[RMDB]
RNA sequence: GGGAACGACUCGAGUAGAGUCGAAAAGAUAUGGAUCCCGGAGCUUUUGACGCGGAUUCGGAAACGAAAUCGCGAUAAGCUCCUGGAUCCUAAGUCAAACGGUAUGCAACUUCGGUUGCAUACCGAACUCUUAAGACUGGUUCGCCAGUCUUAAGAGAAAAGAAACAACAACAACAAC
Reactivity to DMS in 0.01 (KOAc 150mM, MgCl2 10mM, bicine 150mM(pH8.5), 24C), signal-to-noise 3, nucleotides 027 to 126: g000a020u000a150u010g000g000a010u000c000c000c160g000g000a030g000c010u000u010u000u000g010a220c030g000c000g010g000a050u000u000c000g030g010a040a030a090c000g000a000a010a020u000c000g000c000g000a060u000a040a030g010c000u000c000c000u000g000g010a000u000c000c000u020a000a040g000u000c000a110a140a270c020g010g010u000a000u000g000c000a010a010c000u000u010c220g010g000u000u000g000c000a000u000a000c000c010g010a010a040
Reactivity to 2A3 in 0.01 (KOAc 150mM, MgCl2 10mM, bicine 150mM(pH8.5), 24C), signal-to-noise 4, nucleotides 027 to 126: g010a000u040a030u090g000g000a000u000c020c010c010g000g000a020g000c060u270u300u300u300g090a040c000g010c000g020g000a010u010u010c010g000g020a020a020a010c010g010a000a010a040u020c010g000c020g060a090u090a290a050g000c000u000c000c000u000g000g000a010u020c000c000u000a020a000g020u010c030a160a000a070c010g010g000u010a000u010g000c010a000a010c010u070u110c300g170g000u000u010g000c000a000u000a000c000c000g000a000a000
Chemical mapping of a 177-nucleotide RNA with DMS and 2A3.
The 2A3 profile rests on 8,033 reads.
The RNA was probed in 150 mM KOAc, 10 mM MgCl2 and 150 mM bicine (pH 8.5) at 24 C.
Source: RMDB library TTRDEL, as collected in RNAgym.
For DMS, 4,304 sequencing reads were counted.